[RMDB]
This 177-nucleotide RNA was probed chemically with DMS and 2A3. The data come from the RNA Mapping Database (RMDB), library OK2TRN. For DMS, 3,816 sequencing reads were counted. The 2A3 profile rests on 1,636 reads. For DMS the reverse transcriptase was MarathonRT.
RNA sequence: GGGAACGACUCGAGUAGAGUCGAAAAGCUGCUGCAGCGUGAGCCCUGCGGGGCGGGGCAGGCGGUGGAGAGGCAGGGGCUGCCGGUGGUGGGGUGUGGGCAGCUGCCUGCGGCGUCUCGUGCCCCCCUUUAAUGAAUCCUUCGGGAUUCAUUAAAGAAAAGAAACAACAACAACAAC
Reactivity to DMS in 0.01 (KOAc 150mM, MgCl2 10mM, bicine 150mM(pH8.5), 24C), signal-to-noise 1, nucleotides 027 to 126: g000c020u000g010c020u000g010c040a060g040c040g020u010g020a200g020c020c030c010u000g010c080g010g000g010g020c050g000g010g000g030c040a080g010g030c050g020g000u010g000g000a120g010a110g000g010c030a050g000g010g000g010c030u000g010c020c030g020g010u010g000g020u010g010g000g000g010u000g000u010g000g010g020c030a040g000c020u000g010c020c020u000g010c010g010g010c040g010u010c000u000c040g000u010g000c010c000c000c050c060
Reactivity to 2A3 in 0.01 (KOAc 150mM, MgCl2 10mM, bicine 150mM(pH8.5), 24C), signal-to-noise 1, nucleotides 027 to 126: g010c010u080g010c050u040g040c020a050g030c030g110u080g060a030g010c000c020c000u040g010c130g030g040g050g050c030g010g060g000g000c030a030g020g000c040g020g090u130g010g040a100g000a060g110g000c030a000g070g010g030g000c020u040g020c010c020g050g070u080g010g110u110g020g030g030g010u150g010u090g040g000g060c010a010g000c010u060g240c020c000u010g030c000g000g050c030g040u030c010u020c040g000u010g010c000c000c000c000c030